An RNA of 207 nucleotides, treated with 2A3 and DMS and read out base by base.
Conditions: 150 mM KOAc, 10 mM MgCl2 and 150 mM bicine (pH 8.5), 24 C.

[RMDB]
RNA sequence: GGGAACGACUCGAGUAGAGUCGAAAAGAUGUCCUUUGGUGUGGGUACAUCGGGUGGCACUACAAUUACUAUGACGCAUCAUGGUGGUUGUGAACUCGAGGCUUGAUGCGUCAAGUUUUGAGUGUUCUAUGUUACUGUACCCACAGUGAUAUAGAAACGUGUCGACUAUGUUCGCAUAGUCGAUACGAAAAGAAACAACAACAACAAC
Reactivity to 2A3 in 0.01 (KOAc 150mM, MgCl2 10mM, bicine 150mM(pH8.5), 24C), signal-to-noise 5, nucleotides 027 to 156: g110a060u140g040u090c010c000u040u040u160g200g020u060g010u030g020g000g000u040a010c010a020u030c050g000g010g100u110g030g000c020a010c030u220a150c030a100a070u150u030a030c010u040a100u250g000a010c000g000c010a010u000c010a000u070g020g050u070g020g030u120u050g040u100g180a090a040c050u020c090g040a020g100g060c000u000u010g000a000u000g000c010g000u000c000a000a000g000u010u000u000u020g010a020g000u010g030u090u040c020u080a040u070g060u040u060a080c050u030g000u010a040c000c000c010a000c010a000g000u010g010a020u030a020u030a140g090a010a090a020
Reactivity to DMS in 0.01 (KOAc 150mM, MgCl2 10mM, bicine 150mM(pH8.5), 24C), signal-to-noise 4, nucleotides 027 to 156: g000a080u010g010u000c010c040u010u000u000g020g020u000g040u000g010g010g010u020a030c010a040u000c040g030g030g050u040g010g030c060a080c030u010a090c030a040a040u010u010a030c030u020a080u010g030a080c110g010c130a060u000c010a060u000g020g030u000g030g030u000u000g050u000g010a080a090c080u000c050g010a100g010g010c040u010u000g000a030u000g020c160g020u000c010a010a050g020u000u000u010u000g010a070g010u000g000u010u000c050u000a040u010g020u010u000a060c050u000g010u000a090c070c040c070a230c000a020g000u000g000a080u010a060u000a060g010a080a070a230
Values cover nucleotides 27 to 156. For DMS, 12,113 sequencing reads were counted.